[RMDB]
RNA sequence: GGGAACGACUCGAGUAGAGUCGAAAAGGCUGCUGCCGGAGCCGAUACCGGAAUACGAGACCUUAUGUGCGGUCGAAUGCACUGAAGUACGAAAGUACGAAGAGGUCACACCGAGGACCGAGACUCGAUAUGCUCGGUAGAUGGAGCUUUACAUCAACGAGUAGUAUGCUUUCGAGCAUACUACUCGAAAAGAAACAACAACAACAAC
Reactivity to DMS in 0.01 (KOAc 150mM, MgCl2 10mM, bicine 150mM(pH8.5), 24C), signal-to-noise 2, nucleotides 027 to 156: g010g020c000u010g050c010u000g040c010c080g040g040a040g010c010c010g000a160u010a040c040c000g000g000a150a090u000a070c070g000a040g030a110c040c040u000u010a090u020g040u000g030c000g010g000u000c170g000a050a130u000g000c000a020c050u010g000a110a250g030u000a050c000g030a120a090a260g020u000a000c010g000a080a210g000a110g010g020u000c010a110c170a200c100c020g000a120g010g000a180c010c040g000a070g010a180c040u000c000g010a190u010a100u000g000c030u000c000g000g020u010a060g100a110u000g030g000a120g020c040u000u020u010a140c090a090u000c020a070a220
Reactivity to 2A3 in 0.01 (KOAc 150mM, MgCl2 10mM, bicine 150mM(pH8.5), 24C), signal-to-noise 3, nucleotides 027 to 156: g060g000c000u030g000c050u040g040c040c000g050g010a000g020c000c100g070a040u060a090c000c020g000g040a120a040u090a110c100g030a050g000a140c000c010u050u010a050u140g010u020g000c020g000g050u120c080g050a040a020u100g010c010a000c040u080g020a130a040g010u000a000c010g030a140a020a000g010u010a000c000g020a080a020g060a010g000g000u000c010a010c060a020c060c040g010a060g020g030a020c010c010g030a030g040a060c020u010c030g080a080u050a060u270g020c030u030c020g000g000u000a010g000a010u070g040g040a020g010c000u070u100u130a110c060a060u110c050a080a060
Structure probing data (DMS and 2A3) for a 207-nucleotide construct. DMS adducts were read by reverse transcription with MarathonRT. The RNA was probed in 150 mM KOAc, 10 mM MgCl2 and 150 mM bicine (pH 8.5) at 24 C. For 2A3, 1,554 sequencing reads were counted. The data come from the RNA Mapping Database (RMDB), library OK3TST. The DMS profile rests on 2,186 reads.